[RMDB]
RNA sequence: GGGAACGACUCGAGUAGAGUCGAAAAUCCUAAGUCACUCACCGUGCACGUUGAAAGUUCGUUGUCAGCUCGGUCGGAAACGACCGAGCUUGGAUUUACGAACUGGAGUGCACGAUGAGUGAUAUGGAAAACUCACUCCACUUCGGUGGAGUGAGAACUACUAGACUAAGUUCGCUUAGUCUAGUAGAAAAGAAACAACAACAACAAC
Reactivity to 2A3 in 0.01 (KOAc 150mM, MgCl2 10mM, bicine 150mM(pH8.5), 24C), signal-to-noise 4, nucleotides 027 to 156: u020c000c000u020a090a020g020u020c000a000c000u000c000a000c000c000g000u010g000c000a000c010g150u180u000g030a020a010a010g000u000u000c000g010u010u010g010u010c000a000g000c010u000c000g010g000u000c000g010g060a070a070a080c020g010a000c000c000g000a000g000c030u000u030g000g000a000u030u050u140a000c000g000a000a000c000u000g000g020a020g000u000g000c000a000c000g000a000u000g010a000g000u000g000a000u000a010u010g010g020a020a080a050a040c000u000c000a000c000u000c000c000a010c020u030u070c270g080g000u010g000g000a000g000u000g000a000g000a000a000
Reactivity to DMS in 0.01 (KOAc 150mM, MgCl2 10mM, bicine 150mM(pH8.5), 24C), signal-to-noise 3, nucleotides 027 to 156: u000c000c000u000a070a230g020u000c000a010c000u000c010a020c000c000g030u000g000c000a010c010g000u010u000g000a250a230a070g010u000u000c010g030u000u000g010u000c000a070g000c000u000c000g030g040u000c000g010g000a150a180a300c010g020a020c000c010g000a000g020c000u000u000g020g010a040u010u000u000a000c010g000a010a020c010u000g000g020a220g020u000g010c010a010c010g010a000u000g000a030g020u010g000a000u000a050u010g000g000a110a060a140a130c010u000c000a010c000u000c000c000a020c010u000u010c300g020g000u000g010g010a030g020u000g000a000g010a050a120